[RMDB]
RNA sequence: GGGAACGACUCGAGUAGAGUCGAAAAUCCGUCCGGGCCCUCUUCGCCGGAGGCGCCCCCUCCCCGUCCUUAUCCUUCUUUCCAAGUAUUCCUUUGAUGUUUCCCAGCCAGGGAUUUUCCUCCUCUAAUAGAAGGUACUUCGGUACCUUCAAAAGAAACAACAACAACAAC
Reactivity to 2A3 in 0.01 (KOAc 150mM, MgCl2 10mM, bicine 150mM(pH8.5), 24C), signal-to-noise 8, nucleotides 027 to 129: u040c020c010g040u060c060c040g000g000g010c000c020c010u030c060u240u160c090g130c120c050g030g000a010g000g010c120g020c000c000c000c000c000u020c010c010c000c010g030u050c000c010u060u100a090u100c000c000u030u020c000u040u050u010c020c000a050a030g040u020a130u030u070c020c000u020u080u160g090a070u110g060u010u020u020c010c000c000a010g000c020c020a020g030g000g030a040u060u020u040u060c010c020u020c000c000u050c020u070a080a140u060a100
Reactivity to DMS in 0.01 (KOAc 150mM, MgCl2 10mM, bicine 150mM(pH8.5), 24C), signal-to-noise 4, nucleotides 027 to 129: u040c000c000g010u010c030c170g000g000g000c020c020c010u020c060u020u010c160g050c170c150g000g000a020g020g050c170g000c000c000c000c000c000u030c000c020c010c030g030u030c030c040u040u040a120u000c060c030u000u000c040u000u000u000c000c000a100a130g000u040a030u000u050c000c000u000u010u010g000a030u050g010u000u000u000c000c000c000a130g020c050c030a040g010g000g000a110u000u000u000u000c020c040u040c010c010u040c030u060a060a070u060a120